The record gives the reactivity of an RNA of 207 nucleotides to DMS and 2A3. The RNA was probed in 150 mM KOAc, 10 mM MgCl2 and 150 mM bicine (pH 8.5) at 24 C.

RNA sequence: GGGAACGACUCGAGUAGAGUCGAAAAGGAUGGGAAAGCAUGCUUACCGAGAAUUAUAGCAUGCGAAAGGAUGGUACGGACGAUGUCGGCUCUUGACCGCGGGCAUGCGAAAGGAUGGGUACGGUUAUCGCAACGGAUUAUUGAUCCUCAAUGCAUGUCGUAACAUGAUCUUCGGAUCAUGUUACGAAAAAGAAACAACAACAACAAC
Reactivity to DMS in 0.01 (KOAc 150mM, MgCl2 10mM, bicine 150mM(pH8.5), 24C), signal-to-noise 1, nucleotides 027 to 156: g000g040a070u000g020g000g020a090a100a160g050c030a000u000g010c020u010u000a220c110c040g020a190g030a120a040u020u000a040u010a100g000c030a040u000g070c010g020a030a040a060g080g020a110u000g020g040u000a080c050g020g010a050c130g030a110u000g000u000c040g020g050c000u000c050u000u000g020a100c110c030g000c010g000g000g020c020a050u010g000c010g010a090a050a070g010g000a040u000g010g050g010u000a010c040g080g000u020u010a140u010c110g060c040a050a080c060g050g000a080u010u000a080u000u010g000a060u000c010c020u010c010a050a220u000g000c040a100u000g010
Reactivity to 2A3 in 0.01 (KOAc 150mM, MgCl2 10mM, bicine 150mM(pH8.5), 24C), signal-to-noise 3, nucleotides 027 to 156: g020g010a070u080g020g000g070a120a010a020g000c000a000u000g010c010u030u000a040c060c090g070a070g060a160a050u290u110a090u150a090g000c010a010u000g000c020g010a050a000a010g040g000a010u080g000g050u040a080c080g000g020a010c040g040a030u090g000u020c020g030g050c000u020c010u110u130g040a100c040c000g000c060g050g000g000c000a030u100g040c030g020a120a100a040g030g030a020u030g010g050g000u060a040c010g000g090u060u020a100u100c040g000c030a000a100c080g000g040a030u030u010a070u090u260g030a030u000c000c000u020c040a020a080u140g010c030a040u090g030
Source: RMDB library OK3TST, as collected in RNAgym. The 2A3 profile rests on 1,358 reads. DMS adducts were read by reverse transcription with MarathonRT.